[RMDB]
RNA sequence: GGGAACGACUCGAGUAGAGUCGAAAACAGUAUACUUCGGUAUACUGAAAAAACCGUAGGAACAUCGUUAGGGAGAUUACUACAUUCGAAAGAGUGUAGAAUCUUUGAUCUAACGAGUGUUCCUAAACGGAAAAACCGAUCGAUUCGUCGAUCGGAAGGAAAAUAGAGUGUUCGCACUCUAUUUUCCAAAAGAAACAACAACAACAAC
Reactivity to DMS in 0.01 (KOAc 150mM, MgCl2 10mM, bicine 150mM(pH8.5), 24C), signal-to-noise 1, nucleotides 027 to 156: c000a020g010u010a010u000a000c000u010u020c300g070g030u000a000u000a000c010u050g000a000a030a070a090a050a100c010c000g020u020a040g000g000a040a020c000a070u000c010g010u000u000a000g050g010g010a030g040a020u000u000a060c010u010a010c000a010u000u000c000g030a250a120a290g000a020g020u010g010u000a010g030a040a010u000c000u000u000u000g020a090u030c000u000a010a010c010g020a040g010u010g050u010u000c010c000u000a000a010a090c020g000g040a100a050a080a110a230c000c000g010a000u000c000g010a040u000u000c300g020u000c000g000a020u010c000g000g000a040a080
Reactivity to 2A3 in 0.01 (KOAc 150mM, MgCl2 10mM, bicine 150mM(pH8.5), 24C), signal-to-noise 3, nucleotides 027 to 156: c000a010g000u000a000u000a010c020u050u100c210g050g010u000a000u000a010c000u010g060a170a000a000a000a000a010c020c010g010u030a020g000g010a000a010c000a010u010c000g000u000u010a010g000g030g000a020g000a010u010u040a280c000u000a000c010a000u010u000c000g050a150a080a050g010a050g000u000g000u000a000g000a000a000u020c020u150u160u030g040a040u030c000u000a000a000c000g020a020g010u010g000u000u000c000c000u000a010a000a000c010g000g080a070a050a050a040a030c010c000g000a000u010c000g010a020u020u070c210g040u000c000g140a000u010c000g020g000a010a030